[RMDB]
RNA sequence: GGGAACGACUCGAGUAGAGUCGAAAACAUGCUGGGUCCAACCCAAGAUAAGAACAUUAAGACAAGAGAUUUAGUUGUUCCACUCCGUGUUAUUGGAAAACCAGUGAAUGGCAGUCCAGAAGAUGAAGAUUUGACUUAUAUUCGUAUAAGUCAAAUCAAAAGAAACAACAACAACAAC
Reactivity to 2A3 in 0.01 (KOAc 150mM, MgCl2 10mM, bicine 150mM(pH8.5), 24C), signal-to-noise 8, nucleotides 027 to 126: c020a030u080g020c010u030g020g030g020u020c030c020a050a040c030c010c010a030a010g040a080u150a060a040g020a040a020c010a030u090u100a060a020g050a050c050a090a060g040a020g020a150u050u080u130a060g050u040u060g010u020u000c020c010a030c030u010c020c040g050u060g020u140u070a130u080u030g010g000a020a040a060a080c010c010a010g020u040g160a130a040u030g030g000c040a020g050u010c010c010a020g030a070a030g060a080u150g070a060a070
Reactivity to DMS in 0.01 (KOAc 150mM, MgCl2 10mM, bicine 150mM(pH8.5), 24C), signal-to-noise 9, nucleotides 027 to 126: c080a070u010g010c020u000g000g000g010u010c040c060a060a170c070c050c060a120a060g010a110u000a120a130g010a050a050c040a030u010u000a050a060g010a080c070a100a100g010a110g010a070u010u000u010a040g010u000u000g010u000u000c010c030a110c110u000c060c050g010u010g000u000u010a100u000u000g000g000a050a050a080a100c020c020a020g010u010g010a080a060u000g010g010c120a090g020u000c020c020a070g000a090a080g010a080u010g000a100a140

Structure probing data (2A3 and DMS) for a 177-nucleotide construct. The reactions ran in a buffer of 150 mM KOAc, 10 mM MgCl2 and 150 mM bicine (pH 8.5), at 24 C.